[RMDB]
RNA sequence: GGGAACGACUCGAGUAGAGUCGAAAAAUUGACAUGUACAAGGAACAAGGUUUCGGUAACUUGCCAAUUUGUAUCGCCAAGACACAAUACUCUUUAUCCCACGAUGCAACUUUGAAAGGUGUUCCAAGACUAUUUACGAGUUCGCUCGUAAAUAGUCAAAAGAAACAACAACAACAAC
Reactivity to 2A3 in 0.01 (KOAc 150mM, MgCl2 10mM, bicine 150mM(pH8.5), 24C), signal-to-noise 5, nucleotides 027 to 126: a000u060u050g010a000c020a030u060g010u110a030c030a110a180g050g010a080a020c060a190a210g180g000u010u060u040c020g000g020u070a120a160c010u000u030g000c020c000a030a030u020u020u060g030u030a040u050c020g010c090c040a030a020g040a010c030a000c030a140a170u090a130c030u060c010u100u110u090a100u070c010c000c010a010c030g000a000u030g010c020a050a060c080u110u070u120g130a170a060a030g050g030u070g030u050u040c000c000a020a000
Reactivity to DMS in 0.01 (KOAc 150mM, MgCl2 10mM, bicine 150mM(pH8.5), 24C), signal-to-noise 5, nucleotides 027 to 126: a030u000u000g010a030c010a030u010g000u010a050c100a110a150g010g010a030a030c030a160a150g020g010u000u010u000c020g000g010u000a110a070c020u000u000g010c020c000a020a030u000u000u010g000u000a050u010c050g020c040c060a050a060g010a050c090a050c070a060a050u010a090c110u000c030u000u000u000a110u020c020c010c020a200c110g000a050u000g010c040a070a050c140u000u000u000g010a080a120a070g000g010u010g000u000u010c010c030a050a160
The record gives the reactivity of an RNA of 177 nucleotides to 2A3 and DMS. The 2A3 profile rests on 5,970 reads. The reactions ran in a buffer of 150 mM KOAc, 10 mM MgCl2 and 150 mM bicine (pH 8.5), at 24 C. Source: RMDB library OK2TST, as collected in RNAgym. For DMS the reverse transcriptase was MarathonRT. Values cover nucleotides 27 to 126.